The record gives the reactivity of an RNA of 207 nucleotides to 2A3 and DMS. The reactions ran in a buffer of 150 mM KOAc, 10 mM MgCl2 and 150 mM bicine (pH 8.5), at 24 C. 2A3 adducts were read by reverse transcription with SuperScript II with manganese. Source: RMDB library M2RFPK, as collected in RNAgym. The 2A3 profile rests on 3,909 reads.
RNA sequence: GGGAACGACUCGAGUAGAGUCGAAAAUACCGCAGGCCUGCGGUGCGGCAGUGUGGAGACCUGCCGUAAGCCGUGUUGUUUUGACAACCGGGAGAAAGCGUAUGCGGAGGCAGCGCUUUCAGGAUCUAAAAGUAUGGGAUCUUCGGAUCCCAUACAACAUCACAGUAAACUUCGGUUUACUGUGAUGAAAAGAAACAACAACAACAAC
Reactivity to 2A3 in 0.01 (KOAc 150mM, MgCl2 10mM, bicine 150mM(pH8.5), 24C), signal-to-noise 4, nucleotides 027 to 156: u060a000c000c010g010c020a050g090g220c070c200u080g000c000g010g000u000g010c010g010g000c000a010g010u020g020u120g270g090a060g050a070c000c000u000g000c010c000g000u010a030a040g050c030c020g060u070g000u060u000g010u010u050u040u120g060a040c030a050a040c040c010g000g000g010a100g010a010a000a010g000c000g010u030a300u190g000c040g000g120a050g280g000c000a000g000c000g010c010u000u000u010c010a010g020g010a030u050c020u170a060a060a040a050g000u000a000u000g000g000g000a000u000c010u040u040c140g040g000a000u000c000c010c010a000u000a000c000a000a000
Reactivity to DMS in 0.01 (KOAc 150mM, MgCl2 10mM, bicine 150mM(pH8.5), 24C), signal-to-noise 1, nucleotides 027 to 156: u010a190c010c020g050c130a100g040g000c070c050u000g010c000g000g030u000g010c020g020g020c010a040g040u010g050u000g000g020a290g020a090c210c010u010g000c030c010g030u000a010a060g020c000c010g050u000g030u010u000g020u020u000u000u010g010a080c010a010a070c020c000g010g000g010a200g010a020a020a020g010c000g040u000a100u010g020c000g020g080a240g000g080c000a130g010c000g000c010u010u000u000c000a050g010g010a110u000c040u000a040a130a110a130g030u000a020u000g020g020g000a020u000c010u000u000c300g040g010a010u000c000c000c000a000u000a000c000a030a130

The DMS profile rests on 2,554 reads. DMS adducts were read by reverse transcription with MarathonRT.